[RMDB]
RNA sequence: GGGAACGACUCGAGUAGAGUCGAAAAGAAGAUGUUGCGAAGCCAGUACCGCCUGGCGAUGAAAUGGCGGACGAAUUAGCAACAAAGGGUAAGGUUUAAUCGCCGAAGUUAGAUUUCGGAUAGCUGCUAGGACAGUGAUAUUCGUAUCACUGUCCUAAAAAGAAACAACAACAACAAC
Reactivity to 2A3 in 0.01 (KOAc 150mM, MgCl2 10mM, bicine 150mM(pH8.5), 24C), signal-to-noise 4, nucleotides 027 to 126: g080a010a010g060a080u130g000u010u010g000c030g010a060a020g130c050c020a060g060u150a210c000c010g000c000c000u030g090g030c090g010a030u070g080a010a080a030u150g030g010c000g020g010a000c000g010a020a050u070u020a030g010c000a010a050c000a000a080a020g050g010g030u170a100a050g020g020u020u020u120a100a080u090c040g010c000c000g010a000a010g020u100u300a070g020a230u040u020u060c020g020g000a010u110a050g060c060u080g020c030
Reactivity to DMS in 0.01 (KOAc 150mM, MgCl2 10mM, bicine 150mM(pH8.5), 24C), signal-to-noise 6, nucleotides 027 to 126: g000a120a090g010a150u010g010u000u000g010c000g010a110a180g010c080c060a130g020u010a070c020c020g010c070c000u000g010g040c130g030a080u020g010a070a110a090u010g000g020c020g010g010a040c030g010a090a050u010u010a220g010c010a020a030c010a040a050a110g000g000g000u040a080a070g010g000u000u010u020a060a070u020c110g020c010c000g010a030a040g010u020u040a110g000a170u020u000u000c010g000g010a080u010a080g020c060u010g000c170